Chemical mapping of a 170-nucleotide RNA with 2A3 and DMS. For 2A3, 743 sequencing reads were counted. For DMS the reverse transcriptase was MarathonRT. DMS (dimethyl sulfate) methylates the pairing face of unpaired adenines and cytosines. The RNA was probed in 150 mM KOAc, 10 mM MgCl2 and 150 mM bicine (pH 8.5) at 24 C.
RNA sequence: GGGAACGACUCGAGUAGAGUCGAAAACAGUUUGAUUUGUAUGUCAAUGUUUACAGGAGCACUAGCCCAGACCCCAAAUUUGUUGAUAAAUACUAUGCUUUUCUUAAUAAGCACUUUUCUAUGAUGAUAAGCACCGUGUUCGCACGGUGCAAAAGAAACAACAACAACAAC
Reactivity to 2A3 in 0.01 (KOAc 150mM, MgCl2 10mM, bicine 150mM(pH8.5), 24C), signal-to-noise 1, nucleotides 027 to 129: c000a030g080u020u120u000g230a190u090u000u060g040u010a120u100g020u020c020a000a070u030g000u040u080u140a020c000a060g000g050a000g180c000a000c000u010a020g120c000c000c000a010g030a020c000c000c000c000a000a280a080u040u090u300g020u000u000g110a050u250a200a010a010u010a190c000u070a000u060g000c000u080u060u000u000c000u150u130a090a050u060a130a050g000c000a050c000u120u000u000u040c000u010a200u000g000a000u020g020a060u000a220a070
Reactivity to DMS in 0.01 (KOAc 150mM, MgCl2 10mM, bicine 150mM(pH8.5), 24C), signal-to-noise 2, nucleotides 027 to 129: c030a120g000u040u010u020g000a100u030u010u090g000u040a030u040g000u000c030a050a080u060g030u010u010u010a100c130a160g040g010a150g010c040a030c220u080a070g090c030c020c000a050g000a260c080c050c000c030a020a200a120u000u060u000g020u000u000g010a070u020a040a060a080u020a030c280u070a100u090g000c010u020u020u020u020c150u040u040a140a040u050a130a080g040c030a030c020u000u000u050u010c010u040a060u000g010a050u080g010a060u030a000a100